[RMDB]
RNA sequence: GGGAACGACUCGAGUAGAGUCGAAAAGAUAUGGAUGUGAUUGGACAUGUUGGUAUUCGGAAACGAAUACCCAACAACAGCCAACACAUCCUAAGUCAAAACUCAGUCCUCUUCGGAGGACUGAGAAUCAAUAUCGUCACUUCGGUGACGAUAUUGAAAAAGAAACAACAACAACAAC
Reactivity to 2A3 in 0.01 (KOAc 150mM, MgCl2 10mM, bicine 150mM(pH8.5), 24C), signal-to-noise 2, nucleotides 027 to 126: g000a000u040a000u050g000g010a010u000g140u020g100a300u010u000g030g000a100c300a300u300g010u000u000g000g010u000a000u010u000c000g000g000a010a020a000c000g000a000a000u000a020c040c050c000a000a000c000a020a040c070a010g020c000c000a000a000c000a000c010a010u000c000c000u000a000a000g000u010c000a030a000a000a270c010u010c000a010g000u000c000c010u010c000u090u130c300g220g010a000g000g000a000c000u000g000a000g000a010a020
Reactivity to DMS in 0.01 (KOAc 150mM, MgCl2 10mM, bicine 150mM(pH8.5), 24C), signal-to-noise 3, nucleotides 027 to 126: g000a010u000a020u010g000g000a010u010g020u000g000a300u000u000g010g020a060c180a060u010g010u000u010g000g010u000a000u000u000c000g020g000a000a010a030c000g030a030a000u000a000c300c100c070a010a000c000a080a160c230a200g000c010c010a010a010c010a010c000a010u000c000c000u010a000a040g000u010c000a110a090a120a160c010u010c000a000g000u000c000c000u010c000u010u020c230g010g010a010g010g000a000c000u000g000a010g010a050a060